[RMDB]
RNA sequence: GGGAACGACUCGAGUAGAGUCGAAAAUUGUCCGGGUUCGCCCGGACAAAGCGGGAGGCGACCGGAGGCCUCCUCCCAGGCGAUCCCACGCCUCGCUCGGGAGCGUGAUGACCUUCGGGUCAUCAAAACUCCCGUAUGGGUUCGCCCAUACGGGAGUAAAAGAAACAACAACAACAAC
Reactivity to DMS in 0.01 (KOAc 150mM, MgCl2 10mM, bicine 150mM(pH8.5), 24C), signal-to-noise 1, nucleotides 027 to 126: u000u000g000u000c010c000g000g020g020u000u050c210g020c000c000c000g000g000a000c000a000a010a070g020c080g010g000g010a030g000g010c050g000a090c100c090g020g000a100g050g000c000c000u000c000c030u000c000c000c010a130g010g000c000g000a080u010c010c010c000a210c020g000c030c000u000c030g000c080u000c140g000g010g000a030g030c180g010u000g000a000u000g000a020c000c000u000u020c150g030g020g010u000c000a000u000c010a050a030a160
The data come from the RNA Mapping Database (RMDB), library M2PK50. Chemical mapping of a 177-nucleotide RNA with DMS.